[RMDB]
RNA sequence: GGGAACGACUCGAGUAGAGUCGAAAACAGAAUCACUUCGGUGAUUCUGAAAGAAAGAAGAAAACGCGCGACGACGAGCGCGAAAUAAAUAAAUCGUCGUAUAAAUCGAGUCCUUCGGGACUCGAAACAACAACCUCUAGUUCGCUAGAGGUUGUUGAAAAGAAACAACAACAACAAC
Reactivity to 2A3 in 0.01 (KOAc 150mM, MgCl2 10mM, bicine 150mM(pH8.5), 24C), signal-to-noise 2, nucleotides 027 to 126: c000a000g000a000a000u000c000a010c020u050u100c210g110g010u010g000a010u010u030c010u010g020a000a010a000g100a010a050a010g150a070a010g140a010a140a020a010c000g030c000g020c010g040a000c000g010a000c000g010a010g000c010g020c000g010a030a020a020u060a000a010a010u090a020a020a020u020c010g000u000c040g000u000a040u120a010a050a010u040c000g000a000g010u000c020c000u080u100c180g040g000g000a010c000u000c000g000a000a000a010
Reactivity to DMS in 0.01 (KOAc 150mM, MgCl2 10mM, bicine 150mM(pH8.5), 24C), signal-to-noise 2, nucleotides 027 to 126: c010a020g000a040a010u000c000a020c010u010u030c180g020g000u000g020a010u000u010c000u010g000a060a060a060g020a070a100a060g010a140a120g000a090a060a090a170c030g010c010g000c000g000a010c000g010a000c020g010a030g000c000g060c000g010a000a040a070u010a050a050a030u000a020a070a050u000c010g000u000c000g010u000a150u000a040a100a130u000c000g010a010g000u000c000c010u000u010c190g020g010g020a010c000u000c000g000a020a020a120